[RMDB]
RNA sequence: GGGAACGACUCGAGUAGAGUCGAAAAUUUUGGGCAGAUAACAACUGUUACGCGUCUUGCCACUGUAUUGUAAACACUACAACAAAUUUUAAGUUUAAAACACCUACGCGACAAGAUGAAUCGGAAAUAUCGAAAAAGAGUUCGCUCUUUUUCGAUAAAAAGAAACAACAACAACAAC
Reactivity to 2A3 in 0.01 (KOAc 150mM, MgCl2 10mM, bicine 150mM(pH8.5), 24C), signal-to-noise 2, nucleotides 027 to 126: u070u070u070u070g050g000g000c020a000g000a070u120a190a030c050a070a040c000u040g020u070u060a060c080g000c010g030u040c020u060u040g000c010c010a050c040u060g000u040a080u080u020g020u010a030a030a060c030a020c120u140a030c010a090a010c030a040a170a130u050u130u110u140a110a080g040u020u000u110a110a100a020a000c050a040c010c000u010a010c010g000c030g010a010c000a020a000g020a050u030g030a050a070u090c000g000g000a050a060a000
Reactivity to DMS in 0.01 (KOAc 150mM, MgCl2 10mM, bicine 150mM(pH8.5), 24C), signal-to-noise 3, nucleotides 027 to 126: u010u000u000u000g010g010g020c040a060g000a080u000a050a070c160a110a160c050u010g010u000u000a060c120g020c070g020u000c040u000u000g010c010c010a050c050u000g030u010a030u000u000g040u000a070a060a100c090a060c100u000a040c060a030a100c080a060a090a070u000u000u010u000a040a110g010u000u000u000a040a080a070a080c060a040c080c080u000a050c070g010c030g010a050c030a020a030g010a010u000g000a050a080u030c090g000g020a080a050a120
The record gives the reactivity of an RNA of 177 nucleotides to 2A3 and DMS. It was measured as part of the RMDB library M2PK90. Conditions: 150 mM KOAc, 10 mM MgCl2 and 150 mM bicine (pH 8.5), 24 C.